[RMDB]
Conditions: 150 mM KOAc, 10 mM MgCl2 and 150 mM bicine (pH 8.5), 24 C. Chemical mapping of a 207-nucleotide RNA with 2A3 and DMS. Reactivities are rounded to 0.1 and cut off at 0 and 3. Values cover nucleotides 27 to 156. The DMS profile rests on 6,596 reads.
RNA sequence: GGGAACGACUCGAGUAGAGUCGAAAAGAUGAAAGGUCGUACAAUUCGAAAGAACCACAGGAUCCGAUUUUAAGGGUCAAACUGCAGGAGAACUGCAGUCGUGCUACCUGACAGCAUGGACCCUACAGGUACCUGUGGGUACGUUAUUGUCAGGUGAGUUUACAAUACAAUUCGUUGUAUUGUAAACAAAAGAAACAACAACAACAAC
Reactivity to 2A3 in 0.01 (KOAc 150mM, MgCl2 10mM, bicine 150mM(pH8.5), 24C), signal-to-noise 7, nucleotides 027 to 156: g120a020u200g090a100a070a030g100g030u100c020g000u030a020c060a120a200u050u120c040g060a040a080a050g030a060a050c000c000a000c010a000g000g020a030u010c010c010g020a100u090u050u050u260a050a030g000g000g000u000c000a010a070a000c000u000g000c000a000g030g080a160g070a290a070c000u010g000c010a000g000u000c010g000u000g000c000u050a140c000c000u000g000a000c010a000g010c000a000u020g080g000a010c010c000c000u040a070c100a060g020g010u140a170c000c000u000g010u010g000g010g000u000a000c010g010u020u080a100u160u140g000u000c000a000g000g000u000g000a010
Reactivity to DMS in 0.01 (KOAc 150mM, MgCl2 10mM, bicine 150mM(pH8.5), 24C), signal-to-noise 3, nucleotides 027 to 156: g000a080u020g020a110a090a070g000g020u010c010g000u000a100c090a100a210u000u000c060g000a140a120a150g000a080a140c000c020a020c030a070g020g000a230u000c000c010g020a220u000u010u000u000a130a100g030g040g010u000c020a090a030a020c000u000g000c000a010g010g010a280g010a150a150c010u030g010c000a010g020u000c060g020u000g000c000u000a100c010c010u000g000a120c020a110g000c010a040u010g030g020a020c040c000c000u010a060c080a080g000g000u010a190c000c020u010g030u000g010g030g020u000a000c090g000u000u010a070u010u010g030u000c000a040g020g010u010g000a150